[RMDB]
RNA sequence: GGGAACGACUCGAGUAGAGUCGAAAAGUAAUAGAUAACUGGAUGCAGCGUAGGGCUCAACGCAUAUCCAGUACGAAUGGUACCUGUAAAUAAAAUAUGAGCCCUAGUACAAGUACCAACAGAAGGAUAAGCGAUGGUGAUGUCAAUCACAUUUGCAGAUCCAUCGCGAGUUCGCUCGCGAUGGAUCAAAAGAAACAACAACAACAAC
Reactivity to 2A3 in 0.01 (KOAc 150mM, MgCl2 10mM, bicine 150mM(pH8.5), 24C), signal-to-noise 2, nucleotides 027 to 156: g030u060a010a100u070a040g090a060u070a070a090c000u000g010g010a010u030g110c270a140g000c300g000u060a060g000g000g000c000u010c020a000a000c010g010c010a010u030a000u190c000c000a000g000u020a000c010g040a100a060u060g000g000u000a000c000c000u000g030u010a020a170a150u110a050a040a070a010u120a050u060g000a000g000c000c000c000u020a010g010u010a020c000a000a020g000u010a000c000c000a010a050c000a050g060a010a010g070g010a060u060a040a070g050c020g040a040u060g050g020u010g010a040u040g130u170c070a020a060u010c000a050c000a010u040u000u110g000c020a020